Structure probing data (DMS and 2A3) for a 177-nucleotide construct. For DMS, 8,936 sequencing reads were counted. In probing experiments dimethyl sulfate is read out at A N1 and C N3, which are open when not base-paired. The RNA was probed in 150 mM KOAc, 10 mM MgCl2 and 150 mM bicine (pH 8.5) at 24 C. 2A3 adducts were read by reverse transcription with SuperScript II with manganese. Values cover nucleotides 27 to 126. DMS adducts were read by reverse transcription with MarathonRT.

RNA sequence: GGGAACGACUCGAGUAGAGUCGAAAACGGUCGUCACGUCGCAGUUGCGGUGAACCACACGGUCGCCGGAUGGUCUGCACUGCGCUUGAUGCCGACGUCGAUGAAGCCGGCAGCGCCAAGCCACGCGGCAUACUAUCCCUUUCGAGGGAUAGUAUGCAAAAGAAACAACAACAACAAC
Reactivity to DMS in 0.01 (KOAc 150mM, MgCl2 10mM, bicine 150mM(pH8.5), 24C), signal-to-noise 4, nucleotides 027 to 126: c060g000g010u040c030g050u000c010a010c010g000u050c000g010c000a030g010u020u010g040c020g020g010u020g020a090a030c010c010a040c300a120c030g000g000u030c080g000c050c030g010g000a230u010g000g020u010c040u010g010c030a020c010u010g010c020g050c040u030u020g010a070u020g010c050c020g000a100c080g000u000c060g000a070u000g000a110a090g010c030c020g000g000c000a030g020c020g010c010c010a050a140g000c020c040a090c080g000c080g020
Reactivity to 2A3 in 0.01 (KOAc 150mM, MgCl2 10mM, bicine 150mM(pH8.5), 24C), signal-to-noise 9, nucleotides 027 to 126: c020g010g080u160c040g010u000c010a010c020g100u130c020g100c010a030g000u210u150g050c020g030g050u070g120a050a030c010c000a020c000a020c050g150g050u290c100g090c190c000g030g010a060u040g000g030u020c030u050g000c000a000c010u010g000c000g000c010u020u060g020a040u040g020c010c010g020a050c040g020u060c030g030a100u090g090a070a020g040c020c000g010g000c040a020g030c010g000c030c010a030a020g020c010c000a030c040g040c030g030
Overview:
For 2A3, 20,966 sequencing reads were counted.